[RMDB]
Description:
This 177-nucleotide RNA was probed chemically with DMS and 2A3. For DMS, 2,100 sequencing reads were counted.
RNA sequence: GGGAACGACUCGAGUAGAGUCGAAAACCUAUUGUAGAUAUUAUCGAGCCUUCUUCUGUACCUGAUUCAACUUCUGCUGCCUUUUGAGCUGCUAUUGAACAUGGUAGCCUCAUAUUAGAUAUAUUACAGUCACUGGAUAUUUCGAUAUCCAGUGACUAAAAGAAACAACAACAACAAC
Reactivity to DMS in 0.01 (KOAc 150mM, MgCl2 10mM, bicine 150mM(pH8.5), 24C), signal-to-noise 2, nucleotides 027 to 126: c000c010u000a060u010u030g040u080a100g000a040u010a040u000u010a080u020c080g060a100g080c060c010u040u000c050u000u000c010u000g060u000a000c000c000u020g000a060u040u020c080a060a010c030u000u060c030u020g000c000u000g010c050c030u050u010u000u030g000a030g020c030u030g000c000u000a010u000u030g010a110a180c130a040u000g000g020u000a040g010c100c020u000c000a070u040a110u020u010a030g000a140u000a040u020a020u030u010a040c190
Reactivity to 2A3 in 0.01 (KOAc 150mM, MgCl2 10mM, bicine 150mM(pH8.5), 24C), signal-to-noise 5, nucleotides 027 to 126: c010c000u070a130u110u190g110u100a070g050a130u050a040u200u140a100u120c090g000a010g030c010c010u040u100c000u090u000c040u130g060u080a100c000c000u090g060a230u050u060c010a060a030c050u090u050c040u070g000c010u030g010c010c010u120u120u020u060g060a040g000c010u010g000c000u020a020u030u120g050a060a040c010a050u050g000g000u000a010g010c000c000u020c010a050u070a120u060u140a010g060a050u050a010u040a030u140u200a060c090
The reactions ran in a buffer of 150 mM KOAc, 10 mM MgCl2 and 150 mM bicine (pH 8.5), at 24 C.